RNA sequence: GGGAACGACUCGAGUAGAGUCGAAAACUGUGGUGAGGCCCUAUCUAGUAUAGCAAUCCACCAAGCAGGUGACUUCACACAAUUCAGGUUCUCACAGAAAAUGCGCCCUGACUUGACAGGUAUGGUCAUAGCUAUGCUAUUUCGAUAGCAUAGCUAUAAAAGAAACAACAACAACAAC
Reactivity to 2A3 in 0.01 (KOAc 150mM, MgCl2 10mM, bicine 150mM(pH8.5), 24C), signal-to-noise 9, nucleotides 027 to 126: c020u030g020u060g060g050u030g020a050g030g030c020c010c000u020a030u020c070u040a040g100u090a060u030a080g050c050a040a060u040c040c010a020c010c010a060a030g070c030a010g020g050u050g040a100c020u040u050c040a010c000a000c020a070a090u090u070c030a030g050g000u060u020c030u010c010a050c010a020g180a020a110a010a030u130g030c030g030c020c000c000u020g030a060c020u050u070g020a040c030a050g040g060u110a070u150g060g000u050c030
Reactivity to DMS in 0.01 (KOAc 150mM, MgCl2 10mM, bicine 150mM(pH8.5), 24C), signal-to-noise 9, nucleotides 027 to 126: c050u010g000u000g010g010u010g000a060g010g000c190c180c010u000a030u010c050u020a100g010u020a040u010a040g000c110a070a200u020c090c020a040c020c030a070a070g000c250a060g000g010u000g000a090c050u010u000c060a090c060a140c070a040a070u010u020c050a060g000g010u010u000c010u000c020a080c090a090g020a060a060a080a070u010g010c060g000c300c010c010u010g010a070c060u000u000g010a090c070a060g000g010u020a040u010g000g000u010c070